[RMDB]
RNA sequence: GGGAACGACUCGAGUAGAGUCGAAAACUUUAAUUGGUCGUGAUGGAACAGCUUUCUGUAUAUUCGAGGUGAAUCUUAACGGUAACUUGAAAGCGCCAUUUACUGGUUCUACUCCUCGAACAACUGAUUAUUACUUCAUGAUCAGUUUUCCAACAUCUCAUUGCAGGAGUUUCGACUCCUGCAAUGAAAAAGAAACAACAACAACAAC
Reactivity to 2A3 in 0.01 (KOAc 150mM, MgCl2 10mM, bicine 150mM(pH8.5), 24C), signal-to-noise 3, nucleotides 027 to 156: c000u040u130u190a020a000u040u010g000g000u030c010g010u000g020a010u020g050g100a120a050c030a060g090c020u040u200u050c050u130g110u040a190u030a010u210u050c010g000a000g000g030u090g060a060a030u050c050u080u070a090a020c020g050g020u040a030a070c040u090u120g110a160a090a060g080c080g010c030c000a020u000u020u130a090c060u050g050g020u020u000c000u030a100c040u020c010c000u010c010g010a020a020c020a040a010c010u010g030a120u020u160a020u080u120a090c040u030u010c020a020u000g000a000u000c020a020g010u050u000u000u030c010c010a030a040c020a150u170c030